The record gives the reactivity of an RNA of 177 nucleotides to DMS and 2A3. Conditions: 150 mM KOAc, 10 mM MgCl2 and 150 mM bicine (pH 8.5), 24 C.

RNA sequence: GGGAACGACUCGAGUAGAGUCGAAAAGAAAGAAGGACGCUGAAAGAUGCGUAGCUACCCUCCUGGUGCACUUCCUGGUGCAAAGCAGAACCAAAGGGUACGGUGGUACGGCGGACAGUAGUCCUAAUGGCUAACCAGUAUUCGUACUGGUUAGCCAAAAAGAAACAACAACAACAAC
Reactivity to DMS in 0.01 (KOAc 150mM, MgCl2 10mM, bicine 150mM(pH8.5), 24C), signal-to-noise 3, nucleotides 027 to 126: g020a060a080a130g000a210a050g000g030a000c020g030c000u000g000a020a250a140g010a000u000g000c040g010u000a070g000c000u000a000c010c000c010u000c000c000u010g000g030u000g000c000a020c000u000u020c230c220u050g000g050u000g020c020a050a010a030g010c020a000g000a170a020c180c170a140a190a020g010g000g030u000a000c010g010g030u000g000g000u000a000c030g010g010c000g000g000a300c000a000g000u000a040g020u010c010c000u010a030a080
Reactivity to 2A3 in 0.01 (KOAc 150mM, MgCl2 10mM, bicine 150mM(pH8.5), 24C), signal-to-noise 2, nucleotides 027 to 126: g110a000a070a030g140a010a000g000g000a000c000g000c010u000g010a010a000a000g020a020u040g200c020g000u000a000g000c010u000a000c010c000c010u050c050c000u020g010g000u040g000c000a000c000u300u250c150c050u160g020g000u000g000c000a000a000a000g110c000a000g070a120a000c030c270a120a010a060g000g000g000u010a000c010g010g140u000g010g000u040a010c030g000g000c010g000g000a000c000a000g020u270a070g000u010c000c000u010a030a110
Reactivities are rounded to 0.1 and cut off at 0 and 3. DMS adducts were read by reverse transcription with MarathonRT. For 2A3, 1,400 sequencing reads were counted.